[RMDB]
RNA sequence: GGGAACGACUCGAGUAGAGUCGAAAAAUGCCGGCAGUUGGUUUGGCGAUCAAUUCAGCGGAGAACGUGUGCCGUUGCUGAAAGAGGCGCUGCAGCUCGCCCGCGAACUCGGUAUUAUCUACCAGCUGCCAGCUCCGUGAUUCGUCACGGAGCUGGCAAAAGAAACAACAACAACAAC
Reactivity to 2A3 in 0.01 (KOAc 150mM, MgCl2 10mM, bicine 150mM(pH8.5), 24C), signal-to-noise 2, nucleotides 027 to 126: a000u050g000c010c010g040g000c000a030g010u020u020g090g060u090u060u240g130g070c020g020a010u060c030a020a130u000u040c010a030g000c020g000g070a060g060a190a000c050g030u070g040u050g300c150c040g070u070u300g000c000u020g000a020a190a110g070a030g000g000c000g000c020u080g000c000a000g050c000u040c040g120c000c000c000g000c000g000a000a030c010u000c060g050g080u080a130u060u040a080u180c010u090a060c050c000a000g040c030u040
Record summary:
Source: RMDB library OK1LIB, as collected in RNAgym. Structure probing data (2A3) for a 177-nucleotide construct. As a SHAPE reagent, 2A3 marks flexible, mostly unpaired nucleotides at the ribose 2'-OH.